[RMDB]
RNA sequence: GGGAACGACUCGAGUAGAGUCGAAAAACUCCGGUCGUACGCGACCGGAGAAAGCUGAGAUUGGGAGCACACUCUUAAAGGGAGUGCUCCUGGUCUCGGCUCGACGCACGGUAUACGUACCGUGCGAGUUUACUUAACCUUUCGAGGUUAAGUAAACAAAAGAAACAACAACAACAAC
Reactivity to DMS in 0.01 (KOAc 150mM, MgCl2 10mM, bicine 150mM(pH8.5), 24C), signal-to-noise 6, nucleotides 027 to 126: a090c000u000c000c010g000g010u000c000g020u010a080c220g020c020g020a010c000c000g000g010a010g010a010a030a020g000c010u000g010a010g000a010u000u000g000g010g000a020g010c000a010c000a080c000u000c000u000u050a120a130a160g010g000g000a060g040u000g000c000u000c000c000u000g000g000u000c000u000c000g000g010c000u000c070g000a200c020g000c000a010c000g000g000u000a040u010a090c180g020u000a010c000c000g010u000g000c000g000a020
Reactivity to 2A3 in 0.01 (KOAc 150mM, MgCl2 10mM, bicine 150mM(pH8.5), 24C), signal-to-noise 9, nucleotides 027 to 126: a000c000u000c000c000g000g010u000c010g020u030a050c290g010c010g110a000c000c000g000g000a000g000a010a010a000g000c000u000g000a000g000a000u010u020g010g000g000a000g010c000a000c000a010c010u050c020u080u280a190a160a210g030g000g010a060g000u000g000c000u000c000c000u000g000g000u000c000u000c000g000g000c000u000c020g060a020c000g000c000a000c000g000g020u010a040u030a050c220g060u010a010c010c000g000u000g000c000g000a000
Description
The record gives the reactivity of an RNA of 177 nucleotides to DMS and 2A3. For DMS the reverse transcriptase was MarathonRT. The reactions ran in a buffer of 150 mM KOAc, 10 mM MgCl2 and 150 mM bicine (pH 8.5), at 24 C.